Chemical mapping of a 207-nucleotide RNA with 2A3 and DMS.
RNA sequence: GGGAACGACUCGAGUAGAGUCGAAAAGUAUGGAUGCCACCGUGACGGCUCAAUCACACAACUGCCAACGAUAACGAGGCGCUCGCUAUUGCUGCGUAACUGACGGCCUGACGGUCUGACGUUACAAAAAACGAAAAGUGGUUCGCCACUUUUCGAACACGUGUAACGUGUUCGCACGUUACACGUGAAAAGAAACAACAACAACAAC
Reactivity to 2A3 in 0.01 (KOAc 150mM, MgCl2 10mM, bicine 150mM(pH8.5), 24C), signal-to-noise 5, nucleotides 027 to 156: g110u090a060u130g030g050a060u080g040c020c020a040c030c040g050u050g060a050c070g020g030c020u020c070a070a110u100c020a030c030a020c000a120a140c060u080g040c020c010a060a040c070g050a050u080a150a030c060g030a060g070g010c040g050c030u050c050g040c040u060a060u150u250g020c050u060g020c020g020u010a010a010c010u020g010a010c020g000g010c000c000u190g100a070c130g010g010u010c010u010g010a000c020g000u000u010a010c000a000a050a020a000a000a020c010g000a010a010a000a000g000u000g020g010u030u050c090g060c030c000a000c000u000u000u000u000c010g010a050a010
Reactivity to DMS in 0.01 (KOAc 150mM, MgCl2 10mM, bicine 150mM(pH8.5), 24C), signal-to-noise 2, nucleotides 027 to 156: g000u000a070u020g020g000a140u020g000c040c010a110c000c070g000u000g030a100c070g000g040c020u000c030a070a190u000c080a150c040a120c050a150a120c040u000g050c040c000a070a080c030g000a100u000a030a090c010g000a170g000g000c070g040c040u000c020g020c000u000a120u000u000g040c000u010g000c030g030u000a030a060c020u000g000a300c300g020g010c010c000u020g010a170c300g020g030u000c030u000g010a300c230g050u010u010a060c000a010a040a050a080a120a100c010g000a000a000a010a010g030u010g000g030u000u000c300g030c020c010a000c000u000u000u000u000c000g000a040a190
For 2A3 the reverse transcriptase was SuperScript II with manganese.
The data come from the RNA Mapping Database (RMDB), library M2RFPK.
DMS adducts were read by reverse transcription with MarathonRT.